[RMDB]
The data come from the RNA Mapping Database (RMDB), library M2PK50. This 177-nucleotide RNA was probed chemically with 2A3 and DMS. Conditions: 150 mM KOAc, 10 mM MgCl2 and 150 mM bicine (pH 8.5), 24 C.
RNA sequence: GGGAACGACUCGAGUAGAGUCGAAAACAUCAGUCGUUCGCGACUGAUGAAACGAGCAAGCGCUGCACGAAAAAGUCGAUCGAAUACCGAUCGACAAGCGCUAAAGAUAGGCCUUCGGGCCUAUCAAGAUACCGUCCUACUUCGGUAGGACGGUAUCAAAAGAAACAACAACAACAAC
Reactivity to 2A3 in 0.01 (KOAc 150mM, MgCl2 10mM, bicine 150mM(pH8.5), 24C), signal-to-noise 1, nucleotides 027 to 126: c000a020u000c010a000g000u010c010g030u060u070c180g020c010g090a000c020u010g000a000u020g000a000a010a020c080g020a040g050c050a100a020g020c040g020c010u040g010c110a090c190g220a250a030a030a060a050g000u000c000g030a000u000c000g000a040a040u120a300c190c000g000a000u000c000g010a000c000a000a000g000c000g020c000u020a000a010a020g000a040u000a000g000g000c000c010u010u030c220g010g000g000c000c010u020a000u000c000a000a000
Reactivity to DMS in 0.01 (KOAc 150mM, MgCl2 10mM, bicine 150mM(pH8.5), 24C), signal-to-noise 1, nucleotides 027 to 126: c040a000u000c000a030g000u000c000g000u000u010c180g030c000g040a000c000u010g010a000u000g000a000a030a180c020g030a040g000c090a120a010g010c010g000c000u000g000c200a130c160g020a030a030a120a080a090g000u000c000g000a010u000c000g000a200a250u020a200c130c000g030a010u000c000g010a000c000a040a000g000c000g000c000u000a040a130a080g000a000u040a000g040g030c000c000u010u010c170g060g040g000c000c000u000a000u000c000a030a080